[RMDB]
RNA sequence: GGGAACGACUCGAGUAGAGUCGAAAAUUGAUGUAAAGUGCGCAACUCGUAACCAGUCCUUAAAGUGAUCAAUAAUUUCUGUUGCUAGAUCGGGCUCGAUCUUUUGAGCAUCCGCUAAACAGCUAAACGAAAUAGAUCACUUCGGUGAUCUAUUUCGAAAAGAAACAACAACAACAAC
Reactivity to 2A3 in 0.01 (KOAc 150mM, MgCl2 10mM, bicine 150mM(pH8.5), 24C), signal-to-noise 2, nucleotides 027 to 126: u050u030g060a000u020g050u240a180a030a000g120u040g090c050g010c020a040a070c040u030c020g030u000a040a000c020c050a050g020u010c030c000u030u080a060a110a050g040u070g070a070u090c030a050a060u130a240a160u090u110u070c030u050g080u090u030g050c060u020a040g000a170u090c050g000g000g060c060u030c050g060a150u040c040u160u180u070u090g010a000g000c000a080u060c010c030g040c010u060a050a070a000c020a000g030c030u110a070a060a060
Reactivity to DMS in 0.01 (KOAc 150mM, MgCl2 10mM, bicine 150mM(pH8.5), 24C), signal-to-noise 2, nucleotides 027 to 126: u000u010g020a060u010g010u020a060a050a100g000u000g010c110g000c050a050a090c100u010c030g000u010a100a060c060c040a090g000u000c010c020u000u010a030a050a090g000u010g020a040u000c090a060a100u010a090a140u000u000u020c020u020g000u010u020g030c110u000a020g010a080u000c000g000g040g000c030u000c010g010a030u020c170u020u000u000u000g010a040g000c000a070u030c040c020g000c100u000a040a050a090c070a010g000c160u030a070a070a240

Structure probing data (2A3 and DMS) for a 177-nucleotide construct. The RNA was probed in 150 mM KOAc, 10 mM MgCl2 and 150 mM bicine (pH 8.5) at 24 C. Values are in units of 0.01, from 0 to 300, in steps of 10. In probing experiments dimethyl sulfate is read out at A N1 and C N3, which are open when not base-paired. 2A3 adducts were read by reverse transcription with SuperScript II with manganese.